[RMDB]
Structure probing data (DMS and 2A3) for a 207-nucleotide construct. For 2A3 the reverse transcriptase was SuperScript II with manganese. The data come from the RNA Mapping Database (RMDB), library M2RFPK. Values cover nucleotides 27 to 156.
RNA sequence: GGGAACGACUCGAGUAGAGUCGAAAAAUCGCGCCUGGUCGGAACAUAACGACGGCGGGCCGGUGGGGAAUCAGGGGGCUACCGUGGGAUAGCGAUGAGACAACCCCUCCGAUGGCACCAAGCGUCGCACACUGGCCAUACUUCGGUAUGGCCAGAAAGUUCAUUGCUUAUUCGUAAGCAAUGAACUAAAAGAAACAACAACAACAAC
Reactivity to DMS in 0.01 (KOAc 150mM, MgCl2 10mM, bicine 150mM(pH8.5), 24C), signal-to-noise 1, nucleotides 027 to 156: a070u010c050g050c040g010c030c000u000g020g020u010c040g000g000a140a300c050a170u010a090a110c010g000a030c010g020g020c060g000g000g040c040c060g000g020u000g020g020g060g010a150a100u000c060a110g000g020g000g040g010c050u010a010c010c020g000u000g000g020g010a140u010a050g040c000g000a090u010g000a170g030a150c000a080a090c040c020c010c000u030c030c050g020a090u000g010g040c030a070c020c020a080a140g000c010g020u030c030g000c000a120c110a170c000u010g010g000c000c000a010u000a000c000u010u000c270g010g010u000a000u000g010g020c000c000a000g000a000a010
Reactivity to 2A3 in 0.01 (KOAc 150mM, MgCl2 10mM, bicine 150mM(pH8.5), 24C), signal-to-noise 1, nucleotides 027 to 156: a000u010c000g000c010g010c030c000u080g060g030u080c050g000g060a140a000c030a180u300a130a020c020g080a000c000g060g050c030g000g030g000c050c030g000g030u080g010g000g030g000a030a140u090c010a110g060g030g000g000g070c030u080a080c000c070g060u130g000g050g000a020u050a040g000c010g030a010u020g020a050g010a030c030a060a140c040c020c030c030u000c020c000g070a110u110g070g000c010a030c100c060a110a030g010c060g050u000c000g030c030a070c000a000c040u000g000g000c020c000a000u000a000c010u010u000c030g010g020u000a000u000g000g050c030c000a000g000a000a010